RNA sequence: GGGAACGACUCGAGUAGAGUCGAAAAUGAGCCAUGCCCAGGGCCUCCCUGGUCUUUACAAUCUGCCUGAGCAUGGACUGGGUGACUACAGUCUCUUCGGUCCCAGAUUCCGUGUGGAGGAUGACCGUACAAAUCCAAUCUUCGGAUUGGAUUUGUAAAAAGAAACAACAACAACAAC
Reactivity to DMS in 0.01 (KOAc 150mM, MgCl2 10mM, bicine 150mM(pH8.5), 24C), signal-to-noise 3, nucleotides 027 to 126: u010g000a150g010c030c010a040u000g000c020c030c010a120g010g000g000c030c020u000c010c010c010u000g020g020u000c100u010u040u010a090c200a100a110u000c020u000g000c010c010u010g000a180g000c040a040u010g010g010a070c020u000g000g000g010u000g010a060c060u010a110c170a110g000u010c090u000c040u000u010c070g000g010u020c020c050c030a050g000a150u010u000c000c050g040u000g010u000g020g000a070g000g010a110u000g010a030c020c040g000
Reactivity to 2A3 in 0.01 (KOAc 150mM, MgCl2 10mM, bicine 150mM(pH8.5), 24C), signal-to-noise 2, nucleotides 027 to 126: u110g020a020g020c000c000a030u050g010c000c020c020a010g010g020g000c030c010u030c020c000c000u010g000g050u000c040u080u180u100a110c090a090a080u040c010u060g060c000c010u040g020a010g000c030a030u030g000g000a010c020u030g000g050g020u090g070a020c020u110a080c110a100g120u010c060u010c010u210u210c070g050g000u020c060c020c000a020g010a090u120u010c010c040g040u060g010u060g040g140a030g010g030a010u030g020a020c000c000g030